Background
Source: RMDB library OK3TST, as collected in RNAgym. The record gives the reactivity of an RNA of 207 nucleotides to 2A3. The 2A3 profile rests on 548 reads. For 2A3 the reverse transcriptase was SuperScript II with manganese.
RNA sequence: GGGAACGACUCGAGUAGAGUCGAAAAGCAGACACAGUGUGUUGAUUUCCUGUGGCUGCCCUAACAAAUUACCACAAACCGAGGGGCUUCCGACACAGACAUUUUUUCUCUCACAGUUCUGGAAGCCAGAAGUCUGCAAUCCAGGUGCUGUCCAGGCCCACAUCAUCUGUUUCGACAGAUGAUGUGGAAAAGAAACAACAACAACAAC
Reactivity to 2A3 in 0.01 (KOAc 150mM, MgCl2 10mM, bicine 150mM(pH8.5), 24C), signal-to-noise 1, nucleotides 027 to 156: g000c010a000g020a000c010a010c040a080g050u030g020u020g020u200u120g140a300u070u050u080c010c000u010g010u020g040g000c000u000g020c000c000c030u060a110a040c100a060a150a040u160u260a080c030c020a080c160a050a190a020c060c030g040a100g000g000g030g000c000u100u030c050c050g020a030c070a000c020a070g080a010c070a060u130u110u080u050u100u030c120u070c010u060c060a050c060a090g050u150u040c000u060g020g020a010a000g000c010c010a000g010a010a010g010u040c010u050g000c040a030a030u010c010c000a000g030g140u200g110c000u050g040u010c030c000a010g020g070c030